[RMDB]
Structure probing data (2A3 and DMS) for a 170-nucleotide construct. It was measured as part of the RMDB library 15KLIB. The RNA was probed in 150 mM KOAc, 10 mM MgCl2 and 150 mM bicine (pH 8.5) at 24 C. Values cover nucleotides 27 to 129. For 2A3, 9,871 sequencing reads were counted.
RNA sequence: GGGAACGACUCGAGUAGAGUCGAAAAUCCUCUUCUUCCUCCCUGCUGAGGUUCUUCCCUCCCCCGGCGAGCUGCUUCUUCUUGUUCUCGAGGGCCUUCCUUCGUCGGUGAUCCCGCCUCUCCUCGUUACCAGCUGGGUUCGCCCAGCUGAAAAGAAACAACAACAACAAC
Reactivity to 2A3 in 0.01 (KOAc 150mM, MgCl2 10mM, bicine 150mM(pH8.5), 24C), signal-to-noise 4, nucleotides 027 to 129: u010c020c020u040c000u060u020c010u050u030c030c020u050c000c000c010u040g030c020u020g020a030g040g000u050u050c020u010u020c000c030c000u020c000c000c010c000c020g030g000c000g000a010g000c010u050g010c000u060u050c000u020u010c010u040u120g080u090u010c040u030c030g020a090g020g020g030c010c000u020u030c010c000u030u070c010g140u020c000g020g030u070g030a080u000c020c000c010g020c000c000u010c000u020c010c000u030c010g050u010u040a090c040
Reactivity to DMS in 0.01 (KOAc 150mM, MgCl2 10mM, bicine 150mM(pH8.5), 24C), signal-to-noise 4, nucleotides 027 to 129: u030c060c000u000c090u030u030c050u000u000c020c010u010c040c000c000u040g010c090u060g010a130g000g000u000u000c110u000u000c000c000c000u020c000c020c030c030c040g020g050c060g000a070g020c050u020g020c060u030u040c020u020u000c050u000u000g020u040u010c020u020c100g040a140g010g010g030c070c040u000u000c030c020u020u030c060g030u020c090g000g000u020g020a000u020c030c020c030g020c030c040u000c020u020c000c000u010c030g040u040u040a090c120